Description: Conditions: 150 mM KOAc, 10 mM MgCl2 and 150 mM bicine (pH 8.5), 24 C. This 177-nucleotide RNA was probed chemically with 2A3 and DMS. For 2A3 the reverse transcriptase was SuperScript II with manganese. The 2A3 profile rests on 4,212 reads. It was measured as part of the RMDB library VIROID.
RNA sequence: GGGAACGACUCGAGUAGAGUCGAAAAGAAACCCGAAGGAAGUCGAGGACGGGGGCUUCCGACUACUCCCGUGUGAGACAGGAGUAAUCCCAGCUGAAACAGGGUUUUCACCCUUCCUUUCUUCUGGCUAUAUGUGAUACUUCGGUAUCACAUAUAGAAAAGAAACAACAACAACAAC
Reactivity to 2A3 in 0.01 (KOAc 150mM, MgCl2 10mM, bicine 150mM(pH8.5), 24C), signal-to-noise 1, nucleotides 027 to 126: g010a030a070a010c000c010c020g050a060a050g000g000a010a030g000u030c060g030a080g100g090a050c070g050g000g000g060g000c000u040u020c020c000g010a000c010u040a030c000u010c000c000c010g030u040g030u070g160a110g040a000c010a020g020g010a020g020u020a020a050u070c000c010c010a010g020c020u030g020a010a010a050c300a200g010g010g000u110u010u110u150c050a000c000c000c000u000u050c000c000u000u050u000c000u010u020c010u010g020g030
Reactivity to DMS in 0.01 (KOAc 150mM, MgCl2 10mM, bicine 150mM(pH8.5), 24C), signal-to-noise 4, nucleotides 027 to 126: g000a120a130a140c020c000c010g010a120a170g000g010a030a040g020u010c040g020a170g000g020a060c070g010g000g010g000g000c040u000u000c020c040g010a090c150u010a030c000u000c000c000c020g020u000g010u010g010a150g010a050c000a020g000g000a040g010u000a040a090u010c110c010c000a030g000c070u000g000a030a040a020c140a040g010g010g000u000u000u010u020c230a090c010c000c010u000u000c020c030u000u000u000c010u000u000c020u000g000g010